[RMDB]
Chemical mapping of a 177-nucleotide RNA with DMS and 2A3. The reactions ran in a buffer of 150 mM KOAc, 10 mM MgCl2 and 150 mM bicine (pH 8.5), at 24 C. The DMS profile rests on 3,645 reads. The 2A3 profile rests on 12,006 reads.
RNA sequence: GGGAACGACUCGAGUAGAGUCGAAAAGAUAUGGACCGGCACGGGAGCUGAGUCGGAAACGACCCAGCGUUGAUCGUGCGGUCCUAAGUCAAACCUUGACCAAAUUGUUCGCAAUUUGGUCAAGGAAGGUAGAUAACGUGUUCGCACGUUAUCUACCAAAAGAAACAACAACAACAAC
Reactivity to DMS in 0.01 (KOAc 150mM, MgCl2 10mM, bicine 150mM(pH8.5), 24C), signal-to-noise 3, nucleotides 027 to 126: g000a030u010a300u000g010g010a000c010c000g020g040c010a020c010g000g000g010a060g030c000u000g000a050g000u010c010g010g010a080a080a160c010g040a000c000c010c000a000g000c000g020u000u020g030a030u010c000g020u000g010c000g000g000u000c000c010u000a000a070g000u000c020a090a130a160c000c000u000u000g000a000c010c000a010a000a030u000u000g010u000u010c220g020c020a000a000u000u000u000g000g000u000c000a000a000g010g010a020a000
Reactivity to 2A3 in 0.01 (KOAc 150mM, MgCl2 10mM, bicine 150mM(pH8.5), 24C), signal-to-noise 2, nucleotides 027 to 126: g040a000u080a030u100g000g010a000c000c020g250g180c010a000c000g000g000g020a000g000c010u010g000a000g030u020c010g030g020a060a080a030c010g010a010c000c010c000a000g000c000g050u120u020g000a010u010c000g000u000g010c000g000g000u020c000c010u020a030a020g050u010c030a060a040a130c010c000u000u000g000a010c000c000a000a010a010u030u020g020u070u100c260g010c220a000a000u000u000u000g000g000u000c000a000a000g000g000a000a010